[RMDB]
RNA sequence: GGGAACGACUCGAGUAGAGUCGAAAAGAUCGGCCUCUGUCCCUCCAUGGUGAGCUCCAGGACCCCCAAAAGGAGGGGGGUGGGCCUUGGACCUCCAGGAGCCAUGGGAUCCGUGGAGUACCCGGGAAAAUGGGAGCCUUCGGGCUCCCAAAAAGAAACAACAACAACAAC
Reactivity to DMS in 0.01 (KOAc 150mM, MgCl2 10mM, bicine 150mM(pH8.5), 24C), signal-to-noise 1, nucleotides 027 to 129: g000a100u000c080g050g000c000c050u110c180u000g040u000c090c060c000u000c060c000a020u000g010g020u130g030a300g000c140u030c120c000a000g000g060a110c010c020c010c000c010a070a140a090a130g000g000a240g010g040g000g000g000g010u100g000g100g000c000c010u090u000g010g010a070c170c030u010c010c170a030g070g000a180g000c000c000a080u030g040g040g000a180u000c010c000g030u000g000g000a070g030u010a120c060c000c020g100g020g000a060a070a030a100
Reactivity to 2A3 in 0.01 (KOAc 150mM, MgCl2 10mM, bicine 150mM(pH8.5), 24C), signal-to-noise 1, nucleotides 027 to 129: g040a070u110c100g020g010c040c000u070c050u070g000u010c000c010c010u000c000c000a030u000g000g000u040g020a000g000c000u050c010c000a100g000g100a030c000c000c000c000c000a080a150a000a000g100g040a070g000g000g000g000g000g000u080g030g040g050c000c000u000u000g000g000a000c000c020u090c000c030a000g050g000a030g040c000c000a140u100g000g070g000a000u010c030c000g120u040g000g000a030g070u170a090c000c000c030g000g000g000a000a000a000a170